[RMDB]
RNA sequence: GGGAACGACUCGAGUAGAGUCGAAAACCUCACUACAUUUUACUGUUCCUACAGAAUUUGUGACAGGUACAGUAAAACGUAUUGCAAGGUUUAUCAGUUCCUAUAAACAGGUAAAUAACAAUAUAUGAAAAGCAAAGACUGUUCGCAGUCUUUGCAACCUAUAGCAAGGCUUCGGCCUUGCUAUAGGAAAAGAAACAACAACAACAAC
Reactivity to 2A3 in 0.01 (KOAc 150mM, MgCl2 10mM, bicine 150mM(pH8.5), 24C), signal-to-noise 3, nucleotides 027 to 156: c000c010u020c000a000c020u020a000c000a020u000u000u000u000a000c000u000g010u030u020c010c010u020a060c020a050g190a300a260u090u300u270g090u060g100a080c060a090g000g000u000a000c000a000g000u010a000a000a020a000c010g010u000a000u010u000g030c100a080a030g020g010u000u000u060a180u110c010a010g000u040u010c000c020u020a040u140a070a120a020c060a060g040g070u110a150a110a080u140a130a030c040a120a010u090a020u060a040u260g110a110a070a020a020g000c000a000a000a000g000a010c000u000g040u040u080c190g000c040a000g000u000c000u000u020u000g000c000a000a000
The record gives the reactivity of an RNA of 207 nucleotides to 2A3. Conditions: 150 mM KOAc, 10 mM MgCl2 and 150 mM bicine (pH 8.5), 24 C. The 2A3 profile rests on 1,413 reads. It was measured as part of the RMDB library M2RFOK.